[RMDB]
RNA sequence: GGGAACGACUCGAGUAGAGUCGAAAAGAUAUGGAGAAUCUCUAGCCGAAGAACUUAUUCGGAAACGAAUAAGGGAGGAACUACUAGAUCUUCUCCUAAGUCAAAGCGUACAGUUCGCUGUACGCAAUCAUUACAAGCGGUUCGCCGCUUGUAAUGAAAAAGAAACAACAACAACAAC
Reactivity to DMS in 0.01 (KOAc 150mM, MgCl2 10mM, bicine 150mM(pH8.5), 24C), signal-to-noise 3, nucleotides 027 to 126: g010a020u000a260u010g020g000a010g000a030a000u000c240u000c010u000a020g000c030c080g000a070a090g000a290a170c010u000u000a000u000u010c010g010g000a040a050a080c000g010a010a000u000a010a000g000g000g000a100g020g030a120a060c070u020a100c010u000a000g010a010u000c210u000u000c000u000c000c000u010a030a110g000u000c030a080a090a150g010c000g000u000a000c000a010g000u000u010c260g020c000u000g000u000a000c010g010c010a030a000
Reactivity to 2A3 in 0.01 (KOAc 150mM, MgCl2 10mM, bicine 150mM(pH8.5), 24C), signal-to-noise 2, nucleotides 027 to 126: g000a000u040a030u080g000g000a010g000a020a020u020c020u000c000u070a030g070c080c120g300a300a050g020a050a020c000u010u010a010u000u010c000g050g000a040a020a000c000g000a000a010u000a000a000g000g010g010a020g020g030a150a180c160u220a010c000u010a300g000a030u000c000u010u000c000u000c000c010u000a070a000g030u010c050a140a070a040g010c010g000u020a000c000a000g010u010u120c210g040c080u010g000u000a000c000g020c010a000a010